[RMDB]
RNA sequence: GGGAACGACUCGAGUAGAGUCGAAAAUGUGUGCUCGAGAGCCUCCCUGUCCGACAGAGCUUUUAGAUCUUCUGAUCUUUCCCUGGAGGAUAUCGCUUAUGCAUCAAGCGAUUCUCGGAAUAAUUAACCCUGUAAUACGGUUCGCCGUAUUACAGGGAAAAGAAACAACAACAACAAC
Reactivity to 2A3 in 0.01 (KOAc 150mM, MgCl2 10mM, bicine 150mM(pH8.5), 24C), signal-to-noise 2, nucleotides 027 to 126: u130g120u020g010u060g040c030u010c040g080a040g010a030g080c000c000u010c000c000c010u010g050u000c000c010g010a030c010a030g050a040g020c000u050u030u030u090a010g000a010u010c000u280u060c190u300g000a010u000c000u030u000u000c000c000c000u010g050g020a010g030g000a020u010a010u020c010g000c000u000u070a040u240g100c020a100u100c130a050a000g000c000g020a010u070u010c000u000c030g030g110a050a070u120a070a060u220u050a060a060
Reactivity to DMS in 0.01 (KOAc 150mM, MgCl2 10mM, bicine 150mM(pH8.5), 24C), signal-to-noise 3, nucleotides 027 to 126: u020g030u010g030u000g000c020u010c030g010a120g000a150g000c040c040u010c020c020c080u000g010u010c040c020g000a080c090a080g000a090g000c270u000u000u000u000a020g010a020u000c000u000u000c240u010g000a010u000c000u000u000u000c000c010c010u000g020g000a120g010g000a080u000a040u000c020g000c000u000u000a080u010g040c190a100u010c100a050a010g020c000g010a020u000u000c030u000c010g010g000a110a100u020a080a110u000u030a080a200
Overview:
The record gives the reactivity of an RNA of 177 nucleotides to 2A3 and DMS. 2A3 adducts were read by reverse transcription with SuperScript II with manganese. DMS adducts were read by reverse transcription with MarathonRT. Reactivities are rounded to 0.1 and cut off at 0 and 3.